An RNA of 177 nucleotides, treated with 2A3 and DMS and read out base by base. The reactions ran in a buffer of 150 mM KOAc, 10 mM MgCl2 and 150 mM bicine (pH 8.5), at 24 C.
RNA sequence: GGGAACGACUCGAGUAGAGUCGAAAACUUACACUGACUGUAUAGAAAGAGGAGGUAGAGUAAACCUACCCCAUAUACACCUCAGCUCAGGCCCUGUGCCUGGUCUGUAUUGUGAAUGGGGGAACAUUAGCUGAAAUUCGUUCGCGAAUUUCAGCUAAAAAGAAACAACAACAACAAC
Reactivity to 2A3 in 0.01 (KOAc 150mM, MgCl2 10mM, bicine 150mM(pH8.5), 24C), signal-to-noise 2, nucleotides 027 to 126: c030u090u080a000c050a000c010u040g040a080c000u010g230u220a060u050a130g220a000a180a000g060a050g110g000a010g030g020u180a070g010a010g130u030a070a070a070c000c000u090a050c000c000c010c000a000u030a000u010a130c010a000c000c000u000c010a000g000c000u030c000a010g020g000c000c000c100u240g140u300g030c000c000u000g000g000u010c000u000g000u060a060u010u300g000u020g000a000a030u010g000g000g000g000g000a000a000c060a180u050
Reactivity to DMS in 0.01 (KOAc 150mM, MgCl2 10mM, bicine 150mM(pH8.5), 24C), signal-to-noise 1, nucleotides 027 to 126: c120u040u000a070c110a130c030u000g000a300c030u040g000u090a060u010a020g090a060a210a060g000a110g000g000a200g000g010u070a080g000a050g060u050a000a020a080c070c000u000a110c010c000c000c000a000u000a070u010a070c000a000c060c190u000c000a000g000c000u000c000a000g000g010c070c010c220u080g000u040g000c000c010u040g000g000u020c000u000g000u000a100u000u000g000u000g000a100a000u000g000g000g000g020g000a030a040c070a110u000
About this RNA:
Reactivities are rounded to 0.1 and cut off at 0 and 3. The 2A3 profile rests on 822 reads.